[RMDB]
RNA sequence: GGGAACGACUCGAGUAGAGUCGAAAAUGAAAUAAAGCCUACGAAGAACCACGUACGCAAACAGAAAAGCGGACCUACGAGCGCACAGCGCUCAGGUAUGAGCGCAAAACAUAGGAAUUGAAAAAAACACCGAUAUAUUGUUCGCAAUAUAUCGGUGAAAAGAAACAACAACAACAAC
Reactivity to DMS in 0.01 (KOAc 150mM, MgCl2 10mM, bicine 150mM(pH8.5), 24C), signal-to-noise 2, nucleotides 027 to 126: u010g000a050a070a070u000a070a110a120g000c020c020u000a040c040g040a050a150g000a070a090c020c040a200c050g010u000a040c240g010c020a090a070a120c110a100g000a060a040a110a140g010c030g020g010a020c030c010u000a040c140g000a060g010c020g010c070a050c180a140g020c000g000c010u000c000a010g000g010u000a070u010g000a020g000c000g010c010a030a020a060a020c100a030u000a070g020g010a100a150u010u010g000a000a000a070a060a090a110a170
Reactivity to 2A3 in 0.01 (KOAc 150mM, MgCl2 10mM, bicine 150mM(pH8.5), 24C), signal-to-noise 1, nucleotides 027 to 126: u020g030a000a040a040u180a070a050a020g070c000c020u000a000c010g100a160a120g010a110a020c010c030a030c000g040u010a000c000g040c000a030a040a080c100a010g180a030a200a040a000g020c020g040g020a010c000c000u020a030c050g100a010g050c000g020c010a060c080a190g000c020g000c000u000c000a000g000g080u190a190u160g050a010g020c030g000c000a000a070a000a000c040a040u150a000g150g040a060a040u240u300g080a130a090a020a020a010a000a010
This 177-nucleotide RNA was probed chemically with DMS and 2A3. The RNA was probed in 150 mM KOAc, 10 mM MgCl2 and 150 mM bicine (pH 8.5) at 24 C. The 2A3 profile rests on 712 reads. Reactivities are given for positions 27 through 126. For 2A3 the reverse transcriptase was SuperScript II with manganese.